Description
This 207-nucleotide RNA was probed chemically with DMS and 2A3. Source: RMDB library M2RFPK, as collected in RNAgym. DMS adducts were read by reverse transcription with MarathonRT. For DMS, 3,930 sequencing reads were counted. The RNA was probed in 150 mM KOAc, 10 mM MgCl2 and 150 mM bicine (pH 8.5) at 24 C.

RNA sequence: GGGAACGACUCGAGUAGAGUCGAAAAAUGGUAGUUAGUCUACUCGCUAUCCUAGUUACUUUGGAGUAAUCUAAAGUGUGUGUAAACGGGCGAAAGUCUGUAAAAUACUGGGGAUAUAGGGUCAACAAGAACUAGUAGACCUUCGGGUCUACUAGAACAGACAGUCAUUGUUCGCAAUGACUGUCUGAAAAGAAACAACAACAACAAC
Reactivity to DMS in 0.01 (KOAc 150mM, MgCl2 10mM, bicine 150mM(pH8.5), 24C), signal-to-noise 2, nucleotides 027 to 156: a170u000g000g020u000a060g010u000u000a100g020u000c040u000a060c010u000c040g010c050u030a070u000c020c000u000a120g030u000u000a010c010u020u000u000g000g010a020g000u010a130a150u010c010u000a010a020a010g000u000g010u000g030u010g030u000a080a160a050c050g050g000g010c020g000a190a120a190g040u000c000u000g010u010a040a100a050a070u000a030c030u010g020g020g010g020a070u000a060u010a060g000g010g010u000c060a040a040c110a070a170g020a130a180c000u000a000g010u000a020g000a010c000c020u000u000c280g090g010g000u000c000u000a000c010u000a000g010a060a150
Reactivity to 2A3 in 0.01 (KOAc 150mM, MgCl2 10mM, bicine 150mM(pH8.5), 24C), signal-to-noise 3, nucleotides 027 to 156: a020u130g040g000u040a070g020u120u050a040g060u040c020u040a020c010u030c030g030c030u040a010u080c010c010u030a040g030u060u020a010c020u030u000u020g030g000a030g010u120a110a090u000c010u030a010a010a020g020u020g010u010g000u000g030u080a090a130a090c010g000g020g000c020g040a050a000a000g010u000c020u000g040u050a000a080a040a010u100a040c040u030g010g010g000g010a000u010a000u040a080g120g000g020u060c050a030a020c040a110a090g050a080a030c000u000a010g000u000a000g000a000c010c000u010u040c110g050g000g000u000c000u000a000c000u000a000g000a000a000